[RMDB]
RNA sequence: GGGAACGACUCGAGUAGAGUCGAAAAAUUCAGUACAUAAAAGUCGAAAGUAUUGCUAUAGUUAAGGUUGCGCUUGCCUAUUUAGGCAUACUUCUCAGGAUGGCGCGUUGCAGUCCAACAAGAUCCAAAAACAACGGCCACUUCGGUGGCCGUUGAACCUAACAAUACUGUUCGCAGUAUUGUUAGGAAAAGAAACAACAACAACAAC
Reactivity to 2A3 in 0.01 (KOAc 150mM, MgCl2 10mM, bicine 150mM(pH8.5), 24C), signal-to-noise 2, nucleotides 027 to 156: a000u140u040c020a010g100u080a050c020a000u240a090a160a100a050g090u060c020g030a070a000a000g000u000a010u000u190g020c000u030a020u040a140g050u020u070a130a000g000g030u070u040g050c020g000c040u010u070g010c000c000u030a080u130u080u090a040g000g020c050a010u010a000c030u070u050c020u020c100a020g040g030a020u050g010g020c050g000c000g040u000u080g010c040a000g020u000c010c000a000a040c020a050a020g030a140u040c090c050a000a090a000a000a000c000a010a010c010g020g010c000c000a010c010u010u030c060g090g010u090g090g160c030c000g010u010u000g000a000a010
Reactivity to DMS in 0.01 (KOAc 150mM, MgCl2 10mM, bicine 150mM(pH8.5), 24C), signal-to-noise 1, nucleotides 027 to 156: a090u000u000c040a060g050u000a050c000a170u010a070a040a130a140g030u000c050g000a150a070a100g000u010a060u000u010g030c040u000a170u000a090g010u000u000a060a090g010g030u010u010g030c050g050c070u000u000g010c000c000u000a170u000u000u000a050g060g070c010a040u000a000c060u010u000c010u000c050a200g010g000a070u000g000g060c080g060c080g040u000u000g000c030a120g040u000c020c020a060a090c070a060a120g010a080u000c050c040a000a060a100a130a050c000a020a020c020g000g050c000c000a050c000u000u010c280g100g040u010g000g010c010c010g000u000u000g010a000a070

The record gives the reactivity of an RNA of 207 nucleotides to 2A3 and DMS. The DMS profile rests on 2,569 reads. Values cover nucleotides 27 to 156. The data come from the RNA Mapping Database (RMDB), library M2RFPK.